This 170-nucleotide RNA was probed chemically with DMS and 2A3. For DMS, 5,951 sequencing reads were counted. For DMS the reverse transcriptase was MarathonRT. Values cover nucleotides 27 to 129. The reactions ran in a buffer of 150 mM KOAc, 10 mM MgCl2 and 150 mM bicine (pH 8.5), at 24 C. The 2A3 profile rests on 5,904 reads. High DMS reactivity at an A or C suggests that its Watson-Crick edge is free. For 2A3 the reverse transcriptase was SuperScript II with manganese.
[RMDB]
RNA sequence: GGGAACGACUCGAGUAGAGUCGAAAACUAAGCAGUCUUAUGCUAUUGCCACCAUCAAAGAAAUUGUUGGUGAGCGCCAACUAUUACUUGUGUGGGAGGCUGGCAAGUCCAAACCACCACUCAAUCGGAACUGGGCUGUUCGCAGCCCAGAAAAGAAACAACAACAACAAC
Reactivity to DMS in 0.01 (KOAc 150mM, MgCl2 10mM, bicine 150mM(pH8.5), 24C), signal-to-noise 3, nucleotides 027 to 129: c060u020a060a000g000c040a090g000u040c100u040u060a150u020g040c060u000a070u000u000g030c040c000a120c010c000a080u030c000a030a000a060g020a140a040a050u060u030g010u000u010g000g030u060g150a040g100c140g100c020c060a100a000c130u020a090u050u020a130c090u000u000g020u000g000u020g030g000g000a200g060g020c170u040g050g010c040a030a110g000u020c050c040a030a070a200c090c070a140c020c100a050c070u050c030a000a000u010c080g000g000a030a040
Reactivity to 2A3 in 0.01 (KOAc 150mM, MgCl2 10mM, bicine 150mM(pH8.5), 24C), signal-to-noise 3, nucleotides 027 to 129: c040u030a110a000g010c000a020g050u070c020u180u200a080u070g000c020u050a130u050u240g010c000c000a000c000c000a020u050c040a070a040a040g090a040a150a110u060u000g000u000u000g000g000u010g060a040g030c100g000c000c000a040a020c020u050a000u140u040a050c010u010u020g000u000g000u000g010g070g020a140g020g000c000u040g020g030c050a100a060g040u000c010c000a060a040a040c040c020a050c020c020a060c000u080c020a020a090u130c050g070g000a040a030